[RMDB]
RNA sequence: GGGAACGACUCGAGUAGAGUCGAAAAACGGUGCGGAAGUUCGCGCUUCCGUGAAACGCGAAAAUCGGACGGUGGCUGCAAGUCGCAUCGCAGAACCGCGGCAAGUGGAGUUAGCGAGAGGAGGCUGAAACCAUCCAACACUUCGGUGUUGGAUGAACCUAAGUACAGAGUUCGCUCUGUACUUAGGAAAAGAAACAACAACAACAAC
Reactivity to 2A3 in 0.01 (KOAc 150mM, MgCl2 10mM, bicine 150mM(pH8.5), 24C), signal-to-noise 4, nucleotides 027 to 156: a000c050g030g010u060g000c010g010g010a040a020g050u090u130c040g050c020g010c050u010u010c010c000g000u020g020a100a080a010c130g010c020g040a030a020a020a110u100c040g040g020a000c030g000g020u020g030g010c040u090g000c100a060a030g020u040c020g020c060a050u060c050g020c000a020g020a090a010c030c030g010c020g030g000c070a080a090g010u070g040g020a050g020u060u070a010g050c030g040a020g010a020g090g010a000g020g010c030u040g020a070a020a020c030c000a010u010c000c000a000a000c010a000c010u040u070c190g080g000u000g000u000u000g000g000a000u000g000a000a000
Reactivity to DMS in 0.01 (KOAc 150mM, MgCl2 10mM, bicine 150mM(pH8.5), 24C), signal-to-noise 2, nucleotides 027 to 156: a020c020g030g030u000g020c000g010g010a100a080g040u000u000c190g010c170g000c020u010u000c010c060g000u010g000a040a070a020c030g020c000g000a090a030a140a070u010c050g020g000a070c020g010g000u000g010g030c020u000g030c030a060a070g020u000c080g020c060a110u010c010g000c050a070g010a100a130c040c030g000c060g020g020c050a100a130g030u010g000g000a100g010u000u000a110g020c040g000a070g000a110g020g000a060g020g020c030u010g010a060a080a170c100c000a020u000c010c000a010a010c000a010c000u000u010c300g040g030u000g010u010u010g000g000a010u000g000a040a070
An RNA of 207 nucleotides, treated with 2A3 and DMS and read out base by base. The data come from the RNA Mapping Database (RMDB), library M2RFPK. The RNA was probed in 150 mM KOAc, 10 mM MgCl2 and 150 mM bicine (pH 8.5) at 24 C. For 2A3 the reverse transcriptase was SuperScript II with manganese. DMS adducts were read by reverse transcription with MarathonRT. DMS (dimethyl sulfate) methylates the pairing face of unpaired adenines and cytosines.